[RMDB]
RNA sequence: GGGAACGACUCGAGUAGAGUCGAAAAACUAUCAUAUUGGUAAUUAGAUUUCCACAUAUGAAUUUUGUGGGGGACACAAACAUUCGGAGUAUAGCACUGGUUCACAGGAAAAACGUAAGUAAAAGAGUACUCAGAAUAUAGGGUGAUAGAUACAUAACGUUUUACGUGACUUCGGUCACGUAAAACGAAAAGAAACAACAACAACAAC
Reactivity to 2A3 in 0.01 (KOAc 150mM, MgCl2 10mM, bicine 150mM(pH8.5), 24C), signal-to-noise 1, nucleotides 027 to 156: a000c050u040a050u030c010a010u020a090u110u040g020g000u070a080a200u090u130a210g100a240u050u040u110c000c050a000c070a000u050a110u090g080a140a160u120u060u230u110g030u020g020g040g000g060g100a020c020a010c000a100a100a000c040a070u030u090c110g080g000a010g050u000a050u120a100g030c010a020c040u000g050g050u170u130c110a080c020a100g000g050a100a070a050a050a000c050g030u200a000a160g000u080a020a030a140a000g040a020g020u040a030c030u020c030a010g020a140a010u230a020u040a030g050g030g050u020g030a080u030a040g000a020u070a030c030a040u140a090a040